[RMDB]
RNA sequence: GGGAACGACUCGAGUAGAGUCGAAAAAGUCAGGGGAGGCCAUGCCCAAGCCAAUGUGCUGUCACAGCCUGCAGCGGGGGCAGCACUUCCUCGGAGGGCCUGGGAGGUGCUGGGGAUGCCCCAGCGCAUGACUAUCAGACUUCGGUCUGAUAGUCAUAAAAGAAACAACAACAACAAC
Reactivity to DMS in 0.01 (KOAc 150mM, MgCl2 10mM, bicine 150mM(pH8.5), 24C), signal-to-noise 5, nucleotides 027 to 126: a090g000u000c060a080g020g010g010g000a100g020g000c150c060a120u000g010c000c000c010a070a090g000c020c040a080a120u000g020u010g020c000u000g000u000c080a080c070a120g010c020c060u000g030c230a100g010c020g010g000g000g000g000c010a010g000c090a050c010u000u000c040c030u000c130g010g010a120g000g000g000c030c020u000g010g010g010a090g020g010u000g000c010u000g000g000g010g020a200u000g000c040c000c000c000a010g010c010g020c100
An RNA of 177 nucleotides, treated with DMS and read out base by base. DMS adducts were read by reverse transcription with MarathonRT. The data come from the RNA Mapping Database (RMDB), library OK2TST. The RNA was probed in 150 mM KOAc, 10 mM MgCl2 and 150 mM bicine (pH 8.5) at 24 C.